[RMDB]
Source information: The data come from the RNA Mapping Database (RMDB), library OK2TST. This 177-nucleotide RNA was probed chemically with 2A3 and DMS. Values are in units of 0.01, from 0 to 300, in steps of 10. The reactions ran in a buffer of 150 mM KOAc, 10 mM MgCl2 and 150 mM bicine (pH 8.5), at 24 C. 2A3 adducts were read by reverse transcription with SuperScript II with manganese.
RNA sequence: GGGAACGACUCGAGUAGAGUCGAAAAGUGAGGCCUAGGCAAGAGGAGCUCGAGAUCAACCUGGGCAAUAUGGCGAAACUCGUCUCUACAAAAAAUACCAAAAUUAGCCAGGCGUGGUGGUACGCACGAUGAAUAACGGGUUCGCCCGUUAUUCAUCAAAAGAAACAACAACAACAAC
Reactivity to 2A3 in 0.01 (KOAc 150mM, MgCl2 10mM, bicine 150mM(pH8.5), 24C), signal-to-noise 2, nucleotides 027 to 126: g080u080g020a040g010g140c020c000u010a010g050g000c060a080a030g010a060g120g070a030g050c050u040c060g080a060g030a060u050c000a030a040c000c010u010g010g000g000c000a010a040u240a090u080g050g010c020g000a030a050a060c030u010c010g040u010c010u020c000u040a070c050a020a150a030a000a020a030u140a100c020c030a010a050a010a130u150u070a040g030c020c030a010g010g030c030g020u020g020g040u110g080g050u070a010c030g030c040a030c100
Reactivity to DMS in 0.01 (KOAc 150mM, MgCl2 10mM, bicine 150mM(pH8.5), 24C), signal-to-noise 2, nucleotides 027 to 126: g030u020g040a100g010g000c040c030u000a050g000g050c130a060a120g010a080g000g000a100g000c120u010c070g010a040g000a070u010c090a100a070c020c000u000g000g030g000c030a060a080u000a080u000g000g000c030g000a080a090a110c030u000c010g000u000c000u010c000u010a070c060a000a040a040a020a030a050u000a110c060c120a010a060a020a100u000u030a130g000c000c020a050g010g000c010g040u000g000g030u020g010g000u000a010c060g010c050a120c140

Annotation: Reactivities are given for positions 27 through 126.